[RMDB]
An RNA of 207 nucleotides, treated with 2A3 and DMS and read out base by base. The DMS profile rests on 6,772 reads. The RNA was probed in 150 mM KOAc, 10 mM MgCl2 and 150 mM bicine (pH 8.5) at 24 C.
RNA sequence: GGGAACGACUCGAGUAGAGUCGAAAACUGUGCCCAGCAGGGCCCAUCCAGGCCGUGGAGAUUCAAGUGGAAAGCUCCUCUCUGGCCGACAUUUGCAGGGCGCACCAUGCCGUUGUCGGGCGCAUGCAGACGAUGGUGACAGAGCAGGCCGCCCAGGCUAUGAUUCGUAAUUCGUUACGAAUCAUAGAAAAGAAACAACAACAACAAC
Reactivity to 2A3 in 0.01 (KOAc 150mM, MgCl2 10mM, bicine 150mM(pH8.5), 24C), signal-to-noise 5, nucleotides 027 to 156: c040u030g030u050g010c010c000c010a040g080c080a090g000g010g020c010c050c000a040u060c030c040a050g000g000c020c010g040u070g020g000a010g010a040u130u110c170a270a120g140u150g200g060a170a080a050g030c000u010c000c000u000c020u010c040u030g010g010c010c010g000a030c010a070u050u050u040g010c050a040g070g150g000c010g000c020a140c030c020a100u170g070c030c040g130u080u080g090u130c070g020g020g000c030g020c020a010u100g020c000a020g010a060c040g040a060u140g010g050u060g020a060c030a020g040a020g050c050a040g040g010c030c010g000c000c010c010a010g050g020
Reactivity to DMS in 0.01 (KOAc 150mM, MgCl2 10mM, bicine 150mM(pH8.5), 24C), signal-to-noise 3, nucleotides 027 to 156: c070u000g020u010g000c000c000c010a190g010c100a090g020g020g040c020c030c020a110u000c060c080a160g000g000c020c030g010u020g010g020a030g010a100u000u000c050a150a160g030u010g000g010a120a080a080g000c030u000c300c020u000c040u000c030u000g020g000c000c010g000a070c070a070u000u000u000g010c030a100g010g000g040c020g030c010a060c020c020a150u010g060c070c110g000u000u000g010u000c030g000g040g020c000g020c030a090u010g010c010a070g000a070c040g010a140u000g000g020u000g000a130c020a060g000a150g010c070a060g000g010c060c020g010c020c000c000a120g000g010